[RMDB]
RNA sequence: GGGAACGACUCGAGUAGAGUCGAAAAGAUAUGGAGCACCUUGGAUUUAUGAUCACAGUAUAUCGGAAACGAUAUAUCACAGUCAUUGUCAGGUGAUUCCUAAGUCAAAGUAGAGUUCGCUCUACAACCUAUCCAACCCGUUCGCGGGUUGGAUAGGAAAAGAAACAACAACAACAAC
Reactivity to 2A3 in 0.01 (KOAc 150mM, MgCl2 10mM, bicine 150mM(pH8.5), 24C), signal-to-noise 1, nucleotides 027 to 126: g010a000u060a020u270g020g010a010g000c000a020c040c000u110u140g100g000a070u300u300u060a030u100g060a000u070c030a030c010a090g020u000a030u010a020u020c000g040g020a050a000a010c000g020a010u000a010u000a030u090c020a010c030a000g020u010c040a050u000u060g000u000c010a000g000g070u000g040a110u010u060c000c010u010a080a050g040u010c020a140a130a010g020u030a000g000a010g020u000u200c230g080c060u070c000u000a010c000a010a040
Reactivity to DMS in 0.01 (KOAc 150mM, MgCl2 10mM, bicine 150mM(pH8.5), 24C), signal-to-noise 1, nucleotides 027 to 126: g010a000u000a300u000g010g000a040g030c000a000c030c000u000u000g060g040a030u000u000u000a020u010g010a040u000c050a100c270a120g030u000a000u000a020u000c000g020g000a190a050a110c000g030a020u030a000u000a050u000c080a110c300a150g000u000c010a010u000u010g010u010c000a020g010g030u000g000a040u010u030c000c030u000a020a200g000u010c050a020a100a150g000u000a000g000a020g020u020u000c300g000c010u000c000u000a020c010a020a080

Chemical mapping of a 177-nucleotide RNA with 2A3 and DMS. The 2A3 profile rests on 1,359 reads. The RNA was probed in 150 mM KOAc, 10 mM MgCl2 and 150 mM bicine (pH 8.5) at 24 C. Values cover nucleotides 27 to 126. 2A3 adducts were read by reverse transcription with SuperScript II with manganese. The DMS profile rests on 594 reads.